RNA sequence: GGGAACGACUCGAGUAGAGUCGAAAAGGCCUGACGUUCGCGUCAGGCCAAACCUGCAGGAGGAUGGAACACUGGGGGGAGCCGAUACCCAGGACAGGGCAGAAACUGUCCCGUUCGCGGGACAGAAGAAUACCCUAUUGUUCGCAAUAGGGUAUUCAAAAGAAACAACAACAACAAC
Reactivity to 2A3 in 0.01 (KOAc 150mM, MgCl2 10mM, bicine 150mM(pH8.5), 24C), signal-to-noise 2, nucleotides 027 to 126: g010g000c000c010u010g020a010c010g030u050u110c300g010c000g160u010c010a000g010g000c000c010a000a000a000c000c000u020g020c030a030g000g050a020g030g000a040u070g030g040a060a030c050a020c150u070g000g000g010g020g000g000a010g000c000c000g020a050u070a090c020c010c010a000g030g020a030c030a020g010g010g030c020a020g080a050a110a010c010u000g000u010c000c000c000g010u030u040c250g000c000g030g000g010a010c000a000g020a000a000
Reactivity to DMS in 0.01 (KOAc 150mM, MgCl2 10mM, bicine 150mM(pH8.5), 24C), signal-to-noise 4, nucleotides 027 to 126: g000g030c000c000u000g000a020c020g030u000u010c210g030c020g020u000c010a010g010g020c010c000a000a030a040c010c000u000g020c070a080g010g010a080g000g010a040u000g000g000a070a090c080a070c060u000g010g000g010g010g000g000a070g010c030c030g010a100u000a090c040c010c010a090g010g000a060c070a070g010g010g000c100a080g000a100a070a160c010u000g000u000c000c000c000g020u000u010c150g010c010g000g000g000a010c000a000g000a050a070
Structure probing data (2A3 and DMS) for a 177-nucleotide construct. The reactions ran in a buffer of 150 mM KOAc, 10 mM MgCl2 and 150 mM bicine (pH 8.5), at 24 C. For DMS the reverse transcriptase was MarathonRT. The DMS profile rests on 6,244 reads.